RNA sequence: GGGAACGACUCGAGUAGAGUCGAAAAGAUAUGGACCGACAGGGAGCUCGUGUCGGAAACGACGAGCGAAGAACUGUACGGUCCUAAGUCAAAGGUCUAUAUCCCCCUUCGGGGGGAUAUAGACCAACCUUGCCUAUAACUUCGGUUAUAGGCAAGGAAAAGAAACAACAACAACAAC
Reactivity to DMS in 0.01 (KOAc 150mM, MgCl2 10mM, bicine 150mM(pH8.5), 24C), signal-to-noise 2, nucleotides 027 to 126: g000a040u010a300u010g000g000a000c000c000g000a030c000a030g000g000g000a040g050c000u000c020g000u020g000u010c030g010g000a050a060a140c040g010a020c010g000a000g050c000g020a070a120g000a050a110c000u000g000u000a090c010g000g010u000c000c000u000a010a060g000u020c060a090a090a130g010g020u000c000u000a000u000a000u000c010c010c000c000c000u000u020c210g020g020g020g000g000g000a000u010a000u000a000g000a010c000c000a000a020